[RMDB]
RNA sequence: GGGAACGACUCGAGUAGAGUCGAAAAUCAGUGUCAUACACUUGGGAUAAGCAGGUCGAUGACGAAGACCGUUUGGAAGUAUUCCCUGCUAAUUCAUCAUAUCCAUCAACUAAACUAAUUACUUUAAUGAAAAUUUAGGAUUCGUCCUAAAUUUUCAAAAAGAAACAACAACAACAAC
Reactivity to 2A3 in 0.01 (KOAc 150mM, MgCl2 10mM, bicine 150mM(pH8.5), 24C), signal-to-noise 1, nucleotides 027 to 126: u060c000a010g020u000g030u120c030a000u080a160c020a000c010u000u080g040g000g040a100u080a050a010g000c040a020g010g000u020c020g070a030u080g060a050c040g020a130a000g070a030c010c020g020u070u020u100g020g030a080a000g010u000a060u050u090c000c010c020u050g000c010u070a080a040u070u000c040a050u130c020a060u090a020u030c040c020a050u010c010a000a090c040u050a070a050a000c010u180a070a190u190u300a060c010u150u150u260a130a130
Reactivity to DMS in 0.01 (KOAc 150mM, MgCl2 10mM, bicine 150mM(pH8.5), 24C), signal-to-noise 1, nucleotides 027 to 126: u000c030a040g000u020g010u000c050a110u000a300c020a020c040u010u010g040g030g020a050u000a120a150g010c060a030g010g000u000c110g000a040u000g010a050c100g000a110a140g000a100c040c070g060u010u000u000g040g000a040a060g010u000a120u030u000c040c000c010u010g030c080u000a040a060u000u000c060a050u000c060a040u010a050u000c060c030a060u010c160a060a120c120u000a050a010a120c060u010a050a130u010u010a110c040u000u000u000a020a110